[RMDB]
RNA sequence: GGGAACGACUCGAGUAGAGUCGAAAAAUUGAGGGCCGACUGGAAAGCUAAAUUGCCCGCUCAUGACCCAGACAUGUUCAUGACGUUUGAGAAUGCACUGCUAAUCCCAAAGGGAAACGUGGUCAUAGUAUUACCUUUUAUUCGUAAAAGGUAAUACAAAAGAAACAACAACAACAAC
Reactivity to 2A3 in 0.01 (KOAc 150mM, MgCl2 10mM, bicine 150mM(pH8.5), 24C), signal-to-noise 6, nucleotides 027 to 126: a000u090u070g020a090g010g040g010c040c040g070a080c070u070g030g060a170a060a030g010c030u070a070a130a160u100u070g020c010c010c020g050c020u010c010a040u060g020a050c040c000c030a020g060a050c060a070u200g040u110u080c030a040u080g080a070c100g060u090u140u150g090a130g060a100a030u040g010c090a010c050u030g010c010u040a070a050u040c020c010c050a130a110a090g050g000g020a060a030a000c060g030u070g030g000u030c010a020u030a040
Reactivity to DMS in 0.01 (KOAc 150mM, MgCl2 10mM, bicine 150mM(pH8.5), 24C), signal-to-noise 9, nucleotides 027 to 126: a090u010u000g010a080g020g000g020c030c130g010a120c070u000g010g010a100a100a090g010c060u010a050a080a110u010u000g010c030c020c030g000c100u000c040a040u000g000a090c040c030c040a110g010a090c110a050u000g010u010u000c060a070u000g000a090c110g000u000u000u000g010a100g000a080a050u000g000c080a040c060u000g010c040u010a110a210u000c000c000c010a060a090a140g020g010g010a030a040a090c170g020u000g000g010u000c040a060u000a140
About this RNA:
An RNA of 177 nucleotides, treated with 2A3 and DMS and read out base by base. DMS adducts were read by reverse transcription with MarathonRT. The data come from the RNA Mapping Database (RMDB), library OK2TRN.